[RMDB]
RNA sequence: GGGAACGACUCGAGUAGAGUCGAAAACUCUCUGGUUUGCUACCCCAAUGAUAACAAUAGUCUUGUAAAGAUAAACCGCAAGAAAAUUUAUACACAUCCAUCCAAAUAACUCUCGCACCAUCAGAUGUACUAGGACUGAAUUCGUUCAGUCCUAGUAAAAAGAAACAACAACAACAAC
Reactivity to 2A3 in 0.01 (KOAc 150mM, MgCl2 10mM, bicine 150mM(pH8.5), 24C), signal-to-noise 8, nucleotides 027 to 126: c010u020c010u000c030u050g010g060u050u050u080g020c020u070a070c000c000c000c020a050a080u100g060a070u070a150a050c050a120a070u100a150g070u020c010u040u050g090u110a140a100a080g050a040u090a070a110a060c040c020g010c020a020a010g100a030a070a020a010u130u210u080a100u060a050c040a020c000a030u030c040c000a020u000c010c010a010a090a050u060a060a090c010u010c010u010c060g050c020a030c020c010a060u070c020a040g060a100u110g030
Reactivity to DMS in 0.01 (KOAc 150mM, MgCl2 10mM, bicine 150mM(pH8.5), 24C), signal-to-noise 4, nucleotides 027 to 126: c060u010c020u000c070u010g000g020u010u000u030g030c070u000a030c040c010c010c030a090a040u030g020a080u030a090a100c140a080a060u030a090g010u000c040u000u020g000u000a110a100a110g020a130u010a040a080a070c160c130g010c040a040a040g000a040a040a060a080u020u020u010a070u030a110c070a050c060a020u020c010c020a060u020c030c020a040a050a030u010a030a090c040u000c040u000c040g000c020a050c020c030a050u020c090a080g010a100u020g020
Chemical mapping of a 177-nucleotide RNA with 2A3 and DMS.
For 2A3, 7,341 sequencing reads were counted.
The DMS profile rests on 5,922 reads.
In probing experiments dimethyl sulfate is read out at A N1 and C N3, which are open when not base-paired.
The reactions ran in a buffer of 150 mM KOAc, 10 mM MgCl2 and 150 mM bicine (pH 8.5), at 24 C.